[RMDB]
The record gives the reactivity of an RNA of 177 nucleotides to DMS and 2A3.
RNA sequence: GGGAACGACUCGAGUAGAGUCGAAAACAGCGGCCACAACAUGAACCCUGUCUUCAUAUACUUGGUGCCGAAGCCCUGCCCCCGCGCGCGUAUCGUGCUCCCAGGUUUGUGCGCUCGGCCGGUACGCGCUCCGGCUAAUAUUCGUAUUAGCCGGAGCAAAAGAAACAACAACAACAAC
Reactivity to DMS in 0.01 (KOAc 150mM, MgCl2 10mM, bicine 150mM(pH8.5), 24C), signal-to-noise 2, nucleotides 027 to 126: c100a100g020c090g000g020c050c040a070c070a050a070c210a080u000g000a110a100c080c050c070u010g000u000c080u000u000c070a050u000a090u000a090c130u010u000g010g020u000g000c020c020g010a100a100g000c040c010c020u010g010c020c010c020c020c020g020c150g010c040g000c010g010u010a020u000c000g020u000g010c020u000c010c010c010a100g000g000u010u010u000g000u000g000c040g010c080u010c100g010g000c000c010g010g000u000a000c030g020c020
Reactivity to 2A3 in 0.01 (KOAc 150mM, MgCl2 10mM, bicine 150mM(pH8.5), 24C), signal-to-noise 1, nucleotides 027 to 126: c000a010g030c030g000g000c000c000a040c000a150a020c030a070u030g030a050a060c010c020c110u140g070u040c070u060u040c040a030u160a010u030a210c010u020u110g130g010u060g050c000c000g050a030a010g070c030c000c000u050g010c050c020c040c000c000g020c030g000c010g000c000g020u020a030u060c000g030u120g010c020u010c020c000c000a000g050g060u080u100u090g090u010g030c030g010c040u030c040g000g020c000c000g000g030u030a020c010g020c000
High DMS reactivity at an A or C suggests that its Watson-Crick edge is free.
Reactivities are given for positions 27 through 126.
For DMS the reverse transcriptase was MarathonRT.
For 2A3 the reverse transcriptase was SuperScript II with manganese.
Conditions: 150 mM KOAc, 10 mM MgCl2 and 150 mM bicine (pH 8.5), 24 C.